The record gives the reactivity of an RNA of 177 nucleotides to DMS and 2A3.
DMS adducts were read by reverse transcription with MarathonRT.
Conditions: 150 mM KOAc, 10 mM MgCl2 and 150 mM bicine (pH 8.5), 24 C.
It was measured as part of the RMDB library OK2TST.
[RMDB]
RNA sequence: GGGAACGACUCGAGUAGAGUCGAAAACAUUGCCACCCUUAACCUGGUUGUAUUUUUCCACCACAGCUUGUAGAGCAUUAGCGGCAUUUUUAGAAGUUAAUGAAGAGGCUAACACAAUUUUGCCAUCUAACACAACACAAUUCGUUGUGUUGUGUUAAAAAGAAACAACAACAACAAC
Reactivity to DMS in 0.01 (KOAc 150mM, MgCl2 10mM, bicine 150mM(pH8.5), 24C), signal-to-noise 6, nucleotides 027 to 126: c110a130u000u000g010c030c060a110c060c030c050u000u010a070a100c120c070u000g010g010u000u010g010u000a050u000u000u000u000u000c020c020a070c110c070a060c090a050g010c050u000u000g020u000a070g010a110g010c040a050u000u000a040g010c050g010g010c040a050u000u010u010u010u000a100g010a110a090g000u000u000a040a050u010g010a090a090g010a120g000g010c030u010a020a060c120a070c140a060a100u000u000u000u000g010c030c010a100u010c090
Reactivity to 2A3 in 0.01 (KOAc 150mM, MgCl2 10mM, bicine 150mM(pH8.5), 24C), signal-to-noise 3, nucleotides 027 to 126: c010a020u050u130g020c010c000a010c000c020c000u010u040a030a050c000c020u020g010g000u030u030g070u060a140u040u150u010u020u030c010c030a040c010c010a040c030a030g080c030u070u050g070u130a040g010a000g060c010a030u010u070a020g010c040g050g000c040a030u100u050u020u060u040a110g000a150a020g030u050u120a070a040u090g050a060a000g050a030g070g000c030u020a110a000c090a000c010a140a110u040u080u080u100g010c010c000a030u020c030